[RMDB]
RNA sequence: GGGAACGACUCGAGUAGAGUCGAAAACUUGAUCUUGGCUUCGGCCAAGAUCAAGAAAAUUUCCGAUUUUUCGGCUCGCAGAAGAGCACUGAAAUAAAAGGAAUUAGAGACUUCGGUCUCUAAUUCCCCCUACCAUUACGUUCGCGUAAUGGUAGGGAAAAGAAACAACAACAACAAC
Reactivity to DMS in 0.01 (KOAc 150mM, MgCl2 10mM, bicine 150mM(pH8.5), 24C), signal-to-noise 2, nucleotides 027 to 126: c010u010u000g010a000u010c000u000u000g000g010c000u000u000c270g050g000c000c000a000a000g000a000u000c000a000a000g000a010a030a080a170u010u000u000c000c020g010a240u000u000u000u000u000c020g000g000c000u000c020g000c130a190g020a140a160g000a030g030c000a000c070u010g000a040a010a030u020a080a060a100a170g000g000a010a010u000u000a000g010a020g010a030c000u010u020c280g050g000u000c000u000c000u000a000a000u000u000c000c000
Reactivity to 2A3 in 0.01 (KOAc 150mM, MgCl2 10mM, bicine 150mM(pH8.5), 24C), signal-to-noise 2, nucleotides 027 to 126: c000u000u000g000a010u010c000u000u000g000g020c020u030u070c200g110g000c020c000a000a000g010a000u010c000a000a000g010a010a010a000a000u040u030u000c000c010g040a060u080u000u020u000u080c010g000g000c000u030c020g010c090a120g110a300a020g010a090g000c020a030c050u140g040a020a050a050u220a020a110a060a030g010g000a000a000u010u000a010g000a000g000a000c010u010u020c290g090g020u030c010u000c000u000a000a000u000u000c000c000
Source information: Source: RMDB library RFMREP, as collected in RNAgym. Chemical mapping of a 177-nucleotide RNA with DMS and 2A3. The 2A3 profile rests on 2,062 reads. For DMS, 1,410 sequencing reads were counted.